[RMDB]
RNA sequence: GGGAACGACUCGAGUAGAGUCGAAAACAGGAUAAUGGAGGCCUGGACUCUGAGGAAUCCUAUCCAUAUGAGGCAACAGUAAGUGGAGCUCCUUGUCAUCAUUCCAGCUCAGCUUUUGGAAGGUGGACUGGACCAUAACUUUCGAGUUAUGGUCCAGAAAAGAAACAACAACAACAAC
Reactivity to DMS in 0.01 (KOAc 150mM, MgCl2 10mM, bicine 150mM(pH8.5), 24C), signal-to-noise 2, nucleotides 027 to 126: c070a130g000g000a030u000a050a170u020g020g010a060g020g010c020c010u000g010g010a130c060u000c040u000g000a120g020g000a070a090u010c060c050u000a090u010c010c010a060u010a070u000g000a080g000g050c010a060a070c080a090g010u000a060a110g000u000g020g000a060g030c050u000c000c020u040u000g000u000c050a050u000c070a120u010u000c050c020a040g010c090u000c090a080g000c130u000u000u000u000g010g010a090a050g010g020u000g000g020a240
Reactivity to 2A3 in 0.01 (KOAc 150mM, MgCl2 10mM, bicine 150mM(pH8.5), 24C), signal-to-noise 1, nucleotides 027 to 126: c040a000g090g000a040u040a220a080u240g050g020a030g010g060c010c000u020g010g060a060c020u000c040u100g050a050g070g000a050a060u070c010c010u050a130u030c020c000a040u140a070u270g100a040g050g030c010a040a050c020a050g090u200a170a070g010u090g120g000a000g010c000u040c000c000u010u120g000u050c010a020u010c000a090u050u000c020c010a040g040c040u060c070a070g050c170u080u160u220u090g040g030a070a040g040g030u050g060g040a070